[RMDB]
RNA sequence: GGGAACGACUCGAGUAGAGUCGAAAAACUGUUGAGCUUGGCCAAUGAGCUACGAUGGCCAAGAGCCCUUUUUUGGGCUCCCUGCUAAGUAGUGAUGUUAAUUUCCUGGGGCUGCUGUCACAAAUGACCACAAACAGCAUGGCUGAAAACAACAGGAUGACUGAUUAGGUUUCGACCUAAUCAGUCAAAAAGAAACAACAACAACAAC
Reactivity to 2A3 in 0.01 (KOAc 150mM, MgCl2 10mM, bicine 150mM(pH8.5), 24C), signal-to-noise 2, nucleotides 027 to 156: a000c020u040g030u010u020g030a020g020c010u010u000g000g000c000c000a100a090u200g040a080g020c000u040a050c030g100a090u090g010g000c000c000a010a000g000a010g000c000c000c000u090u130u060u020u090u110g000g000g000c000u000c000c000c000u000g000c010u010a070a100g010u000a030g040u010g070a100u110g070u130u080a190a100u110u050u080c040c040u050g010g000g010g010c000u060g030c080u070g030u040c020a010c030a040a170a110u160g040a060c050c010a050c040a020a090a000c010a040g000c010a020u010g030g000c000u080g080a130a090a000a000c030a030a010c000a010g070g050a070
Reactivity to DMS in 0.01 (KOAc 150mM, MgCl2 10mM, bicine 150mM(pH8.5), 24C), signal-to-noise 2, nucleotides 027 to 156: a050c030u010g020u000u010g010a080g020c090u000u000g020g020c000c010a060a080u030g010a250g030c040u010a080c030g010a220u010g010g030c000c050a040a010g000a030g010c060c000c010u000u030u000u020u000u000g030g010g040c010u000c000c040c060u000g040c000u000a050a260g000u000a040g040u010g020a200u020g030u000u000a080a120u010u000u000c040c010u000g000g030g000g030c080u000g030c030u000g000u000c010a160c090a050a090a070u010g000a120c020c030a050c080a060a060a100c080a050g010c030a120u000g020g030c020u000g010a090a020a120a120c030a060a030c010a030g070g010a220